[RMDB]
RNA sequence: GGGAACGACUCGAGUAGAGUCGAAAAGAAAAUCCCGGUCCCGUCAGACAAAUCAGUGACAUGAUGGUCAUAGCGAAAGCACACGCACGAUAUGUCACUGAUGAAAAAGUGCGUGUGACCAAAAAAACAGUUUACUUGUGUUCGCACAAGUAAACUGAAAAGAAACAACAACAACAAC
Reactivity to 2A3 in 0.01 (KOAc 150mM, MgCl2 10mM, bicine 150mM(pH8.5), 24C), signal-to-noise 1, nucleotides 027 to 126: g010a020a130a000a060u020c000c030c000g010g020u020c010c000c010g050u090c050a060g020a150c050a020a160a000u020c000a000g000u000g000a030c020a050u110g050a120u130g090g100u070c040a090u250a060g010c030g140a080a050a020g000c030a010c000a000c010g030c000a000c010g070a070u040a030u220g000u000c000a000c000u030g000a000u030g010a010a000a010a050a010g000u010g000c000g000u040g020u040g020a010c020c030a050a020a000a000a000a060a070
Reactivity to DMS in 0.01 (KOAc 150mM, MgCl2 10mM, bicine 150mM(pH8.5), 24C), signal-to-noise 2, nucleotides 027 to 126: g000a080a110a070a100u010c020c010c000g000g020u000c000c010c010g010u010c110a150g020a100c090a060a160a040u000c000a000g020u000g000a020c000a090u010g020a170u010g000g020u000c050a060u020a060g040c020g000a060a060a240g030c020a100c030a080c050g030c000a060c030g030a140u000a010u000g000u000c000a050c010u000g020a010u000g010a050a040a110a050a050g000u010g020c030g000u000g000u000g030a010c000c020a010a000a030a070a060a010a150
This 177-nucleotide RNA was probed chemically with 2A3 and DMS. Reactivities are given for positions 27 through 126. Conditions: 150 mM KOAc, 10 mM MgCl2 and 150 mM bicine (pH 8.5), 24 C.